[RMDB]
RNA sequence: GGGAACGACUCGAGUAGAGUCGAAAAGAUAUGGAUACACCGUAGCAUUCAGGCGUUGAAAUCGGAAACGAUGGAGCCUGAUGUCAAGGUGUAUCCUAAGUCAAACAGGUGGGUUCGCCCACCUGAAGCUUGAAUAGAACUUCGGUUCUAUUCAAGCAAAAGAAACAACAACAACAAC
Reactivity to 2A3 in 0.01 (KOAc 150mM, MgCl2 10mM, bicine 150mM(pH8.5), 24C), signal-to-noise 3, nucleotides 027 to 126: g010a010u080a020u130g010g000a010u010a010c000a010c000c030g090u170a010g000c000a010u150u300c010a000g030g000c020g290u300u060g000a000a030a010u000c000g000g040a060a050a040c010g010a010u020g000g010a000g000c000c010u000g000a000u010g000u020c020a000a020g000g000u000g000u000a000u000c000c000u000a000a000g000u000c010a030a050a100c000a000g000g010u000g010g020g040u060u080c230g180c030c000c000a000c000c000u000g000a010a020
Reactivity to DMS in 0.01 (KOAc 150mM, MgCl2 10mM, bicine 150mM(pH8.5), 24C), signal-to-noise 4, nucleotides 027 to 126: g000a050u000a300u000g010g000a020u000a000c000a010c010c000g000u010a300g000c010a020u000u000c000a000g010g020c010g000u000u010g000a080a110a020u000c010g010g000a210a070a170c000g030a020u010g000g000a170g010c000c010u010g000a000u000g000u010c020a300a300g000g010u000g000u000a000u010c000c000u000a010a050g020u000c040a090a150a240c010a010g000g010u000g000g000g000u000u020c230g000c010c000c010a010c000c000u010g000a010a080

An RNA of 177 nucleotides, treated with 2A3 and DMS and read out base by base.
The 2A3 profile rests on 8,107 reads.
Source: RMDB library TTRDEL, as collected in RNAgym.
High 2A3 reactivity points to a flexible backbone, as in loops and unpaired stretches.
The RNA was probed in 150 mM KOAc, 10 mM MgCl2 and 150 mM bicine (pH 8.5) at 24 C.
2A3 adducts were read by reverse transcription with SuperScript II with manganese.